[RMDB]
RNA sequence: GGGAACGACUCGAGUAGAGUCGAAAAGAAGGUCGAUAAUAGGAAGUUUGGACUUACUUUCCAAAGCCCUGCUGAUGCCCGAGCCUUUGACAGGGGAGUAAGGAAAGCAAUCGAAGACCUUAUAGAAGGUUCAACAACGUCAUCUUCCACCAUCCAAAAAUUACGUGAGGUUCGCCUCACGUAAUUUAAAAGAAACAACAACAACAAC
Reactivity to 2A3 in 0.01 (KOAc 150mM, MgCl2 10mM, bicine 150mM(pH8.5), 24C), signal-to-noise 2, nucleotides 027 to 156: g060a030a050g040g000u090c040g030a010u120a190a060u100a280g030g010a030a020g040u090u080u150g040g020a000c000u030u040a030c000u000u100u000c000c010a040a080a120g110c010c000c000u010g010c030u030g020a040u070g030c000c040c060g020a070g020c020c030u070u050u030g040a110c010a020g000g030g030g010a030g070u120a130a020g020g000a000a000a010g030c080a030a060u080c080g020a080a000g000a040c000c020u030u010a120u090a080g220a040a000g040g020u110u120c030a070a060c000a050a030c110g000u030c010a030u010c000u010u000c000c020a010c000c030a030u050c010c000a100a100